[RMDB]
The data come from the RNA Mapping Database (RMDB), library OK2TST. Chemical mapping of a 177-nucleotide RNA with DMS. The RNA was probed in 150 mM KOAc, 10 mM MgCl2 and 150 mM bicine (pH 8.5) at 24 C. DMS adducts were read by reverse transcription with MarathonRT. Values cover nucleotides 27 to 126.
RNA sequence: GGGAACGACUCGAGUAGAGUCGAAAAGAUUGUGAGAUCAAUGAAGAAAAAUAGGCAGACACAACCUCAAAACAAAUCUGUCUACAUUGCUUUAGAAUCUGAUUCUUCUGAGGAGAGAGUAAAUGCAGAUGGUAAGACCUUUCGAGGUCUUACCAUCAAAAGAAACAACAACAACAAC
Reactivity to DMS in 0.01 (KOAc 150mM, MgCl2 10mM, bicine 150mM(pH8.5), 24C), signal-to-noise 2, nucleotides 027 to 126: g030a040u000u000g000u040g030a090g030a010u000c040a080a020u010g000a300a050g030a010a120a030a190a300u000a040g020g010c000a010g020a030c160a090c200a160a130c040c050u000c080a040a050a100a130c230a070a140a080u000c000u000g000u000c010u000a020c030a010u000u000g020c220u000u000u000a000g010a030a100u000c000u020g000a140u000u020c010u000u000c090u000g000a040g020g030a080g000a050g000a030g010u040a030a030a060u030g030c230a090